[RMDB]
RNA sequence: GGGAACGACUCGAGUAGAGUCGAAAAAUUGGUGUGAAUGACUCCGCUAACUCUGUGGGGUGCACAGUGCUUUCCCCACAUAGAAUAAAUUAGCAUUCCGACUGUGAUAAUAAUACCAAGUAUAAACGCCAUAAUACUCAAUACUUUCCAUGUACGAACCUUAUUUCAAGUUCGCUUGAAAUAAGGUAAAAGAAACAACAACAACAAC
Reactivity to DMS in 0.01 (KOAc 150mM, MgCl2 10mM, bicine 150mM(pH8.5), 24C), signal-to-noise 3, nucleotides 027 to 156: a110u000u010g020g010u000g020u000g020a120a110u000g000a140c010u010c020c030g000c030u020a070a110c070u000c070u000g050u020g010g010g050g020u000g020c060a130c080a140g010u000g000c030u000u010u020c000c000c000c010a040c030a050u000a040g000a110a120u000a060a030a110u000u000a070g010c040a160u010u000c030c050g020a080c090u000g030u010g020a040u000a060a070u000a060a120u000a080c040c010a080a100g010u000a080u000a070a060a120c060g020c030c050a060u000a080a080u000a040c020u000c040a020a100u000a110c050u010u010u000c020c020a070u000g020u000a110c080g010a050
Reactivity to 2A3 in 0.01 (KOAc 150mM, MgCl2 10mM, bicine 150mM(pH8.5), 24C), signal-to-noise 5, nucleotides 027 to 156: a000u060u030g010g000u030g010u020g060a080a060u110g030a040c030u040c070c070g020c030u020a050a030c030u010c040u020g000u000g000g010g010g000u020g010c030a070c090a120g160u130g060c040u090u130u160c000c000c010c000a010c000a000u030a000g060a060a060u150a080a090a020u090u040a010g000c020a030u100u020c040c050g070a060c110u070g070u050g110a060u050a150a020u080a070a020u040a130c030c020a060a000g030u030a050u060a110a080a010c030g000c020c010a020u040a120a030u050a100c030u020c080a060a060u080a160c020u030u050u030c040c010a060u150g030u100a070c000g020a080